[RMDB]
RNA sequence: GGGAACGACUCGAGUAGAGUCGAAAACACAGGUCUCUCAAAUGGGCGGUGUAUACAGAUGGUCAUCUUACAUUUGAUAGCGAGGGAACUCCGUCCGGGGGUGAACCGCGAAAUAGUACCGGACUCGCCCGAUGAAAUCCUGUCUUUCGGAGUUUAUCCCUAUAAAAAGGUUCGCCUUUUUAUAGGGAAAAGAAACAACAACAACAAC
Reactivity to 2A3 in 0.01 (KOAc 150mM, MgCl2 10mM, bicine 150mM(pH8.5), 24C), signal-to-noise 1, nucleotides 027 to 156: c030a000c010a010g040g000u010c040u020c000u000c130a010a060a150u300g010g000g010c030g000g060u090g010u030a130u060a090c090a040g110a080u120g050g050u040c060a090u020c120u120u100a110c020a140u160u090u090g090a120u070a060g000c010g040a300g000g000g020a010a010c000u010c000c000g200u130c030c070g010g000g000g000g000u020g030a000a020c000c000g000c000g010a070a000a000u120a040g000u010a010c000c000g000g050a020c010u010c000g000c060c000c010g030a010u020g000a000a060a020u070c000c000u010g020u010c020u070u060u050c060g120g060a060g020u030u040u050a030u040